[RMDB]
RNA sequence: GGGAACGACUCGAGUAGAGUCGAAAAGAUAUGGAGGAUGAAGAUCAUUCUUCCCUGAAUGAACUACAGUACUAGUCGGAAACGACUAGGCUGCAUUCAGGGAAGAAUGAUUGUUCCUCCUAAGUCAGCAAUAAACUUGGUUCGCCAAGUUUAUUGCAAAAGAAACAACAACAACAAC
Reactivity to DMS in 0.01 (KOAc 150mM, MgCl2 10mM, bicine 150mM(pH8.5), 24C), signal-to-noise 2, nucleotides 027 to 126: g000a080u010a300u000g020g010a020g000g030a020u010g020a180a300g010a000u000c000a010u000u000c000u000u000c000c000c000u000g000a030a020u000g000a110a040c120u030a300c000a000g000u020a120c000u000a010g000u000c000g030g000a130a110a230c000g000a000c000u000a000g000g020c010u000g030c000a000u000u000c000a000g000g010g000a000a000g000a010a000u000g010a000u000u000g000u000u000c010c000u000c000c000u000a000a030g010u000c060a150
Overview
The record gives the reactivity of an RNA of 177 nucleotides to DMS. The reactions ran in a buffer of 150 mM KOAc, 10 mM MgCl2 and 150 mM bicine (pH 8.5), at 24 C. Reactivities are given for positions 27 through 126. For DMS the reverse transcriptase was MarathonRT.